[RMDB]
RNA sequence: GGGAACGACUCGAGUAGAGUCGAAAACACGGUGCUUCCAAGGUGAUUGAUCCCCUAAAAACACUUGCUUCAAUCCUUUUGGUUGGUCUUCACAAUGCUGUUGCUGUGGACACAACAACGAUGUUGACGGAUUAAAUUUAUUCGUAAAUUUAAUCCGAAAAGAAACAACAACAACAAC
Reactivity to 2A3 in 0.01 (KOAc 150mM, MgCl2 10mM, bicine 150mM(pH8.5), 24C), signal-to-noise 2, nucleotides 027 to 126: c020a000c030g020g010u060g020c030u080u000c020c030a050a040g080g020u090g030a100u050u070g050a080u030c010c000c020c020u100a110a090a000a060a000c040a020c040u040u110g040c010u050u040c020a060a100u050c000c000u040u140u040u070g060g000u010u010g020g010u020c020u070u040c040a010c040a090a160u130g060c060u150g050u200u100g000c020u010g030u020g040g020a010c000a000c000a130a000c010a010a040c060g090a090u090g040u070u080g040a030
Reactivity to DMS in 0.01 (KOAc 150mM, MgCl2 10mM, bicine 150mM(pH8.5), 24C), signal-to-noise 5, nucleotides 027 to 126: c070a070c110g010g010u000g010c040u000u000c010c030a080a080g010g020u010g010a070u000u000g010a110u000c020c020c030c070u000a040a030a080a090a060c100a060c090u000u010g000c050u000u000c050a080a080u000c020c040u000u000u000u010g010g010u000u000g010g010u000c050u000u000c040a070c060a070a100u010g010c030u010g010u000u000g020c050u000g000u000g000g010a120c140a090c020a040a040c020a030a060c110g010a080u010g000u010u000g010a300
The data come from the RNA Mapping Database (RMDB), library OK2TST. An RNA of 177 nucleotides, treated with 2A3 and DMS and read out base by base. For DMS the reverse transcriptase was MarathonRT.